[RMDB]
RNA sequence: GGGAACGACUCGAGUAGAGUCGAAAAUGUUACCAUUAUUGAUCUUAUUAGUUGAGUUUGUUUUACUCAUAUUUCUUGGUAAGAUUCGAAAAAAAAUUAUGGACUAUACAAGAUCAGACGAGUUAUAAGUCACUAUACUUUUCGAAGUAUAGUGACUAAAAGAAACAACAACAACAAC
Reactivity to 2A3 in 0.01 (KOAc 150mM, MgCl2 10mM, bicine 150mM(pH8.5), 24C), signal-to-noise 3, nucleotides 027 to 126: u080g020u060u080a060c010c030a040u080u090a090u150u120g010a020u030c010u000u070a070u050u050a130g030u040u030g030a010g030u020u070u120g100u020u140u110u050a030c030u020c000a020u020a080u260u120u010c070u040u070g020g000u020a040a050g030a150u090u110c100g090a090a030a030a010a010a000a000a030u080u120a060u140g020g020a000c030u030a040u030a210c020a080a000g030a050u050c020a020g100a180c090g070a030g070u060u130a130u060a190
Reactivity to DMS in 0.01 (KOAc 150mM, MgCl2 10mM, bicine 150mM(pH8.5), 24C), signal-to-noise 4, nucleotides 027 to 126: u020g000u010u010a150c020c000a110u010u000a120u020u010g000a020u000c010u000u000a060u000u000a040g000u000u000g010a060g010u000u010u000g010u010u000u000u000a040c030u010c040a050u010a110u000u000u010c110u010u000g020g000u000a020a050g000a050u000u010c130g000a010a000a000a060a130a090a100a090u010u000a100u000g010g000a030c020u000a030u000a060c100a020a060g000a040u000c040a070g010a130c160g010a100g010u000u010a090u000a070